[RMDB]
The record gives the reactivity of an RNA of 207 nucleotides to 2A3.

RNA sequence: GGGAACGACUCGAGUAGAGUCGAAAAGGGGUCUCCCGUUUGACGGAAGCGACAUGCUUACAUGAGUGGCUGAAGCCUCCACGGCCACUUGAGCAACAGCGCUUCCCGAGGGAGACGGAGGCACCCAAACCUCAAUGCGCUUCGGCGCAUUGAGGAACGACUUCAGUGAGUUCGCUCACUGAAGUCGAAAAGAAACAACAACAACAAC
Reactivity to 2A3 in 0.01 (KOAc 150mM, MgCl2 10mM, bicine 150mM(pH8.5), 24C), signal-to-noise 1, nucleotides 027 to 156: g080g000g030g010u030c020u010c050c030c010g000u200u230u160g030a010c010g010g000a000a000g000c000g050a110c120a270u300g010c030u010u080a040c020a170u210g060a020g010u010g000g040c000u030g020a070a020g010c000c000u000c000c000a020c000g010g020c000c040a020c000u000u000g010a000g000c110a080a190c120a190g060c000g000c000u000u000c010c000c030g010a020g020g000g000a020g000a000c000g000g000a010g000g020c000a030c030c000c000a040a110a130c000c000u000c000a000a000u000g010c000g010c040u100u220c300g100g000c000g040c000a000u000u020g000a000g000g000a000a010
Notes:
For 2A3 the reverse transcriptase was SuperScript II with manganese. Values cover nucleotides 27 to 156.